[RMDB]
RNA sequence: GGGAACGACUCGAGUAGAGUCGAAAACGCUGGGAAUCGCGACCAUCGAUCUGCUGAAGCGCGCACGGCAGGGAGGUGCGAGUUCCUGUGCUGAAGCGCGCACGGCAACCGAAAGGUGCGUUGGUGCAUUAUGAUCCUUCGGGAUCAUAAUGCACAAACCCUGAUUAGGUUUCGACCUAAUCAGGGUAAAAGAAACAACAACAACAAC
Reactivity to 2A3 in 0.01 (KOAc 150mM, MgCl2 10mM, bicine 150mM(pH8.5), 24C), signal-to-noise 4, nucleotides 027 to 156: c060g040c080u150g030g020g090a080a060u090c010g010c020g170a060c020c000a040u170c010g020a020u020c040u060g000c010u050g070a250a050g020c010g000c000g000c010a030c040g020g000c000a020g020g030g030a020g030g120u180g110c100g030a040g040u080u020c010c000u070g100u090g020c020u050g020a170a060g020c010g000c000g000c010a010c020g000g010c000a020a000c000c010g040a080a040a020g020g000u050g010c010g030u050u130g100g000u000g000c000a000u000u010a000u000g000a000u010c000c010u030u060c280g040g000g000a000u000c000a000u000a000a000u000g000c000a000c000a000a000
Reactivity to DMS in 0.01 (KOAc 150mM, MgCl2 10mM, bicine 150mM(pH8.5), 24C), signal-to-noise 2, nucleotides 027 to 156: c060g070c020u000g000g000g010a060a090u000c020g030c010g020a090c030c010a240u000c050g010a050u020c040u000g020c000u010g010a070a050g080c040g040c000g040c020a300c020g000g030c030a260g020g000g030a060g000g060u000g050c070g010a080g010u000u010c000c020u000g020u000g050c010u000g000a100a100g010c010g000c000g030c000a270c020g010g040c010a070a110c030c020g020a070a100a140g030g050u000g010c040g010u000u000g000g000u000g010c010a020u000u000a010u000g020a010u000c000c010u010u020c300g020g030g020a000u010c010a000u000a000a000u010g020c010a000c010a000a060